[RMDB]
Structure probing data (DMS and 2A3) for a 177-nucleotide construct.
For DMS, 5,695 sequencing reads were counted.
The RNA was probed in 150 mM KOAc, 10 mM MgCl2 and 150 mM bicine (pH 8.5) at 24 C.
The data come from the RNA Mapping Database (RMDB), library RFM100.
RNA sequence: GGGAACGACUCGAGUAGAGUCGAAAAAAGCGGAACUGGGCUUUACCGCCCAACUUCUAGCGUUAAGGUCCUUCGCGGGCUGAUCCGGGUUGAAGACAUUGUCAGGUGGGGAGUUUGGCUGGGGCGGAUCAUACGAGAGCUUCGGCUCUCGUAUGAUAAAAGAAACAACAACAACAAC
Reactivity to DMS in 0.01 (KOAc 150mM, MgCl2 10mM, bicine 150mM(pH8.5), 24C), signal-to-noise 3, nucleotides 027 to 126: a080a100g010c030g010g000a030a040c150u000g020g010g000c000u000u010u040a150c270c200g000c000c000c010a010a000c230u000u020c010u000a040g000c010g010u000u010a100a190g000g000u000c010c010u000u030c210g020c130g000g000g020c040u000g010a110u000c080c020g000g000g020u000u010g010a090a090g000a060c160a090u020u020g030u010c050a110g010g010u000g000g000g020g000a120g020u000u020u000g010g000c040u020g000g000g000g000c020g000g000
Reactivity to 2A3 in 0.01 (KOAc 150mM, MgCl2 10mM, bicine 150mM(pH8.5), 24C), signal-to-noise 2, nucleotides 027 to 126: a010a000g010c020g000g030a020a000c030u050g020g000g030c010u040u010u040a140c060c040g000c000c000c000a000a000c000u020u050c010u070a070g030c000g000u000u080a060a070g000g020u000c000c000u030u030c080g010c130g000g000g000c010u040g030a050u040c020c010g000g000g020u050u120g040a100a070g020a070c080a180u080u180g030u120c030a040g010g120u060g020g000g020g000a130g050u050u100u110g070g000c040u020g000g000g000g000c000g010g000